[RMDB]
RNA sequence: GGGAACGACUCGAGUAGAGUCGAAAAGAAGGGAAAGGAGACCCAUGGACAGUCUCCAGAGGUUCCUAAGGCCUCGCUCGCGCCUGCAGGGAGGCAGAAUGUCCCGGUUGUCCAUGUAAGAAGAAGAGGACUAUACUGAGUUCGCUCAGUAUAGUCCAAAAGAAACAACAACAACAAC
Reactivity to 2A3 in 0.01 (KOAc 150mM, MgCl2 10mM, bicine 150mM(pH8.5), 24C), signal-to-noise 3, nucleotides 027 to 126: g140a040a100g000g020g040a000a080a070g000g010a020g000a030c000c030c060a010u020g010g000a010c000a010g000u000c000u010c000c010a000g050a010g040g080u030u030c010c010u000a050a070g110g010c000c000u020c010g170c080u030c070g050c000g070c030c160u160g020c030a000g050g000g040a000g020g000c000a000g070a030a060u100g080u060c030c010c000g020g000u100u020g000u000c000c010a000u010g070u150a090a230g040a050a020g040a040a020g070a120
Reactivity to DMS in 0.01 (KOAc 150mM, MgCl2 10mM, bicine 150mM(pH8.5), 24C), signal-to-noise 3, nucleotides 027 to 126: g020a140a050g030g010g020a060a100a100g020g020a030g000a000c000c090c110a110u040g000g010a020c010a230g000u000c000u000c000c000a070g010a080g010g030u030u010c020c070u020a060a110g000g020c010c020u000c030g000c030u010c150g020c050g010c200c110u060g040c060a040g000g010g010a030g000g010c000a090g000a100a040u020g010u000c000c000c000g030g000u000u010g020u010c000c010a040u020g010u040a060a110g060a150a040g010a100a060g000a300